The record gives the reactivity of an RNA of 177 nucleotides to DMS and 2A3.
DMS adducts were read by reverse transcription with MarathonRT.
The reactions ran in a buffer of 150 mM KOAc, 10 mM MgCl2 and 150 mM bicine (pH 8.5), at 24 C.
It was measured as part of the RMDB library OK1LIB.

RNA sequence: GGGAACGACUCGAGUAGAGUCGAAAAGAGCGGACAGGUAUCCACGUCCUAAUAGCCUAUCAUACACCUCCCCGCGUUGAAAUGAUGACAAUCUAUCUUCUAGCUCAUCCAAGUGAUCUUGGAUGAAGCCGUUGUACACUUUCGAGUGUACAACGGCAAAAGAAACAACAACAACAAC
Reactivity to DMS in 0.01 (KOAc 150mM, MgCl2 10mM, bicine 150mM(pH8.5), 24C), signal-to-noise 1, nucleotides 027 to 126: g000a030g040c000g000g010a130c040a030g020g010u020a090u000c000c030a110c100g010u020c030c000u000a030a030u000a110g020c000c000u000a080u060c100a120u000a020c070a030c000c000u000c000c020c040c000g000c060g000u010u000g010a000a010a250u100g030a090u050g000a180c100a050a270u000c020u000a040u040c030u000u000c100u000a120g030c110u000c000a000u020c000c000a000a000g000u050g030a080u050c000u000u010g020g000a020u000g000a030a080
Reactivity to 2A3 in 0.01 (KOAc 150mM, MgCl2 10mM, bicine 150mM(pH8.5), 24C), signal-to-noise 3, nucleotides 027 to 126: g090a040g020c060g030g090a050c050a050g100g050u060a060u050c020c010a060c020g080u010c010c000u040a130a080u040a080g050c000c000u060a140u130c000a050u060a070c020a010c000c000u040c000c010c000c020g060c050g020u010u010g070a070a080a060u130g020a030u040g050a020c030a080a080u020c030u130a120u030c010u090u040c040u110a030g000c020u030c030a000u000c000c000a040a000g010u110g300a190u110c020u020u000g000g000a000u010g000a010a000